Chemical mapping of a 207-nucleotide RNA with 2A3.
Conditions: 150 mM KOAc, 10 mM MgCl2 and 150 mM bicine (pH 8.5), 24 C.
Source: RMDB library OK3TST, as collected in RNAgym.
RNA sequence: GGGAACGACUCGAGUAGAGUCGAAAAUGAACUGUACAGCAUUUCCAAAAAAACUGGGUCCUCAGUUUGAAAAACCUGUGAUUUCAGUUGUACACAAACCCCUUUCCAAAUGAGGACCGUGAAGAAAGGGCCCAAAGUAUCUGCACACACACAGAAACGAUGAAAAUGAGUUCGCUCAUUUUCAUCGAAAAGAAACAACAACAACAAC
Reactivity to 2A3 in 0.01 (KOAc 150mM, MgCl2 10mM, bicine 150mM(pH8.5), 24C), signal-to-noise 2, nucleotides 027 to 156: u060g010a040a050c040u020g070u110a020c010a010g000c020a070u100u040u160c090c040a110a130a030a010a010a030a060c030u060g050g000g000u010c000c000u010c010a030g000u060u060u190g140a120a090a030a050a050c050c090u120g070u090g180a190u040u140u000c030a020g020u010u050g040u030a010c040a000c030a010a080a050c000c000c000c000u000u000u000c050c020a070a120a110u050g010a030g000g000a020c000c000g020u050g000a000a040g030a000a000a000g000g000g040c010c030c010a020a010a000g060u050a030u030c030u030g060c020a060c000a000c010a020c030a000c010a100g100a050a060a030